The data come from the RNA Mapping Database (RMDB), libraries RFM100 and RFMREP.
Structure probing data (DMS and 2A3) for a 177-nucleotide construct.
2A3 adducts were read by reverse transcription with SuperScript II with manganese.
The RNA was probed in 150 mM KOAc, 10 mM MgCl2 and 150 mM bicine (pH 8.5) at 24 C.
RNA sequence: GGGAACGACUCGAGUAGAGUCGAAAAAGGCUUUAUUUCUUCAGUUUUCAUCACGUUUAACUAGUAAUAGUGACCUUUGAAUAACUCUGUGUUUUCAUUAAAUCGUAGUGUUCAUUUACUUUGUCACCUGUCUCGUCUUUUUCGAAAGACGAGACAGAAAAGAAACAACAACAACAAC
Reactivity to DMS in 0.01 (KOAc 150mM, MgCl2 10mM, bicine 150mM(pH8.5), 24C), signal-to-noise 1, nucleotides 027 to 126: a010g010g000c020u000u010u000a050u000u020u000c010u000u000c120a080g010u000u020u020u000c000a120u030c090a170c230g000u000u030u000a040a000c030u000a010g000u000a040a020u000a020g000u000g000a150c010c050u000u000u000g000a050a050u000a030a010c020u000c050u010g040u000g010u030u000u010u000c050a100u030u010a030a060a030u000c040g050u020a030g010u060g000u000u030c110a020u000u030u020a060c170u010u050u000g000u000c110a080c100
Reactivity to 2A3 in 0.01 (KOAc 150mM, MgCl2 10mM, bicine 150mM(pH8.5), 24C), signal-to-noise 3, nucleotides 027 to 126: a000g070g000c010u030u160u060a110u050u020u020c060u010u090c150a020g040u000u040u010u010c080a210u080c110a030c100g040u050u030u080a040a020c000u020a000g010u070a040a070u050a040g020u030g130a270c010c000u000u030u050g050a130a070u070a050a010c000u000c050u050g000u000g040u050u010u020u040c090a110u060u200a050a050a020u110c040g060u040a020g050u000g000u020u000c010a030u020u030u120a100c070u120u070u160g030u110c040a070c020